Structure probing data (2A3) for a 177-nucleotide construct.

RNA sequence: GGGAACGACUCGAGUAGAGUCGAAAACAAAGGUCGGCAGCAACAACAUCUCAAAUAUGAGCAUCAAGGAUUUCAGACCUCCACACGAUGAUGUUGCAAAAUUGCUCAAAGAUAUCAACACAAGCAAGGUUCCGGUUAGGUUCGCCUAACCGGAACCAAAAGAAACAACAACAACAAC
Reactivity to 2A3 in 0.01 (KOAc 150mM, MgCl2 10mM, bicine 150mM(pH8.5), 24C), signal-to-noise 2, nucleotides 027 to 126: c010a030a050a000g060g050u000c000g000g010c050a000g030c000a000a020c010a000a020c010a080u060c050u000c000a000a030a280u300a260u300g020a020g000c010a000u090c030a090a100g140g000a000u120u250u050c040a050g030a180c010c000u000c010c000a070c000a040c290g000a000u140g000a000u090g110u000u000g000c000a040a000a140a000u280u040g000c090u000c000a000a240a000g040a060u030a030u190c120a130a050c000a030c000a140a040g000c000a000a170
The data come from the RNA Mapping Database (RMDB), library OK1LIB. For 2A3 the reverse transcriptase was SuperScript II with manganese. The RNA was probed in 150 mM KOAc, 10 mM MgCl2 and 150 mM bicine (pH 8.5) at 24 C. For 2A3, 463 sequencing reads were counted.